[RMDB]
An RNA of 177 nucleotides, treated with DMS and 2A3 and read out base by base.
RNA sequence: GGGAACGACUCGAGUAGAGUCGAAAAGGAUGCGCCGUCAGCCAGUUCUCCAUGAGGGUCUGGGCUUCAGCGCGAGACCAGUUCGCUGUCUGGUCCUCCAGAACCUUCACAUCCGGGCAUUCAGCCACAGUAAAUUAUCCUUCGGGAUAAUUUACUGAAAAGAAACAACAACAACAAC
Reactivity to DMS in 0.01 (KOAc 150mM, MgCl2 10mM, bicine 150mM(pH8.5), 24C), signal-to-noise 5, nucleotides 027 to 126: g000g010a060u010g000c050g030c030c030g020u010c110a070g010c070c050a110g020u000u000c010u000c030c130a190u020g000a050g010g000g010u010c010u000g000g010g010c040u000u000c060a040g020c060g010c030g010a060g010a110c150c130a090g000u010u000c100g000c030u010g010u000c010u000g010g000u000c030c050u000c010c040a050g000a070a080c020c000u000u000c040a080c170a110u010c090c050g010g010g010c020a070u000u000c050a090g010c050c050a190
Reactivity to 2A3 in 0.01 (KOAc 150mM, MgCl2 10mM, bicine 150mM(pH8.5), 24C), signal-to-noise 2, nucleotides 027 to 126: g050g010a030u050g000c140g120c030c030g070u120c030a020g020c030c010a040g020u080u040c070u000c050c020a110u160g000a060g020g000g000u020c010u010g000g050g040c020u140u100c060a070g010c010g000c030g030a030g000a040c030c030a020g050u100u070c050g000c070u070g070u180c010u010g010g030u010c000c010u020c010c000a060g020a290a260c000c000u040u040c030a050c000a110u070c050c010g050g010g010c030a030u080u080c020a030g020c010c020a050
2A3 adducts were read by reverse transcription with SuperScript II with manganese. Conditions: 150 mM KOAc, 10 mM MgCl2 and 150 mM bicine (pH 8.5), 24 C. Values cover nucleotides 27 to 126. The data come from the RNA Mapping Database (RMDB), library OK2TRN.